[RMDB]
Structure probing data (DMS) for a 177-nucleotide construct.

RNA sequence: GGGAACGACUCGAGUAGAGUCGAAAAUGGGUGAGAGAAACGCGUAUCGAUGAGAUUCAGGGCUUACUAGUUCACACAGUUGCAUCCACACACCAAUUGUUUUAACAAUUUGGAGUGAGUGUGUUUUUGUGUAGAUGUAGUUCGCUACAUCUACACAAAAAGAAACAACAACAACAAC
Reactivity to DMS in 0.01 (KOAc 150mM, MgCl2 10mM, bicine 150mM(pH8.5), 24C), signal-to-noise 1, nucleotides 027 to 126: u010g010g000g030u000g000a000g020a080g010a090a080a130c110g000c040g030u000a070u000c020g020a070u010g000a230g020a040u000u000c080a100g000g000g030c090u000u000a040c060u020a080g030u010u010c050a040c050a020c030a100g020u000u020g020c030a060u000c050c020a130c010a030c030a100c000c000a040a010u000u000g010u000u000u000u010a070a060c000a020a020u000u000u000g060g010a120g030u000g000a080g060u000g000u010g000u000u000u000u010
For DMS the reverse transcriptase was MarathonRT.
Conditions: 150 mM KOAc, 10 mM MgCl2 and 150 mM bicine (pH 8.5), 24 C.